Description
Source: RMDB library RNAMAK, as collected in RNAgym. The record gives the reactivity of an RNA of 207 nucleotides to 2A3 and DMS. DMS adducts were read by reverse transcription with MarathonRT. The RNA was probed in 150 mM KOAc, 10 mM MgCl2 and 150 mM bicine (pH 8.5) at 24 C. For 2A3, 3,784 sequencing reads were counted.
RNA sequence: GGGAACGACUCGAGUAGAGUCGAAAAGGGGUCACACCUAAGACAGAGCGAGACAUGCCUGUGUACUGAAGCCUCCACGGUACUCAGGCAACAGCUCGCUUCGAGGUGUGACGGAGGCACCCAAAGUGUCGCAAUCUGUUCGCAGAUUGCGACACAAUAGUUGAUUGAGAUUCGUCUCAAUCAACUAAAAAGAAACAACAACAACAAC
Reactivity to 2A3 in 0.01 (KOAc 150mM, MgCl2 10mM, bicine 150mM(pH8.5), 24C), signal-to-noise 3, nucleotides 027 to 156: g070g000g020g010u020c000a000c010a010c020c010u050a120a010g030a030c090a030g070a030g010c030g010a010g050a090c240a280u190g000c010c000u020g000u000g000u020a000c010u030g030a180a050g010c000c010u020c010c000a010c000g000g000u000a000c010u010c040a000g020g000c010a010a000c010a000g000c000u000c010g000c020u000u010c010g020a020g000g000u000g000u010g000a000c010g000g000a010g000g000c000a030c000c030c000a060a120a050g010u010g000u020c000g000c000a020a000u000c000u020g080u130u130c300g000c070a000g000a000u000u010g010c010g000a000c010a000c000a000a000
Reactivity to DMS in 0.01 (KOAc 150mM, MgCl2 10mM, bicine 150mM(pH8.5), 24C), signal-to-noise 1, nucleotides 027 to 156: g030g000g050g020u000c030a050c020a050c020c020u010a250a130g010a140c300a050g000a020g000c020g040a020g050a120c050a300u000g030c000c010u000g010u000g040u000a030c010u000g000a040a130g000c050c000u000c000c010a300c000g000g000u010a000c020u020c000a000g000g010c000a020a040c080a070g040c000u000c010g000c030u040u010c020g000a050g030g020u000g000u000g000a060c020g000g000a000g100g070c030a070c000c000c000a060a100a230g030u000g000u000c020g000c030a000a010u000c000u010g060u000u000c270g010c000a030g000a040u000u010g020c000g000a030c000a000c000a020a060
For 2A3 the reverse transcriptase was SuperScript II with manganese.